[RMDB]
RNA sequence: GGGAACGACUCGAGUAGAGUCGAAAAGAUAUGGAUGUUGAACUACAUCUACUCAGUCGAAGAACUCGGAAACGAGGGAGACUGACUAGAUGCAACAUCCUAAGUCAAAGGCGUCUUCGGACGCCAAUCCUGCUAUUCAGUUCGCUGAAUAGCAGGAAAAAGAAACAACAACAACAAC
Reactivity to 2A3 in 0.01 (KOAc 150mM, MgCl2 10mM, bicine 150mM(pH8.5), 24C), signal-to-noise 1, nucleotides 027 to 126: g050a030u130a030u110g010g000a010u010g020u000u030g000a060a050c090u190a010c300a010u020c000u000a010c020u000c000a000g010u000c000g100a300a070g010a060a030c000u010c000g050g000a090a100a100c000g000a000g010g000g000a010g000a000c000u000g020a000c010u020a010g000a000u010g000c000a000a010c010a000u000c000c000u030a080a000g040u000c030a110a090a040g000g000c010g010u000c010u070u120c300g180g020a010c000g000c000c000a000a000
Reactivity to DMS in 0.01 (KOAc 150mM, MgCl2 10mM, bicine 150mM(pH8.5), 24C), signal-to-noise 2, nucleotides 027 to 126: g010a060u000a300u000g010g010a020u010g000u030u020g010a070a100c110u010a300c000a000u000c010u000a000c100u000c000a000g050u010c000g000a130a110g000a130a260c010u000c000g010g000a040a100a190c000g010a000g020g000g000a050g020a000c030u010g010a000c060u010a000g000a010u000g000c010a010a010c000a000u000c000c000u000a020a100g000u000c020a050a080a090g000g000c010g000u000c000u000u010c250g010g010a000c000g040c000c000a010a060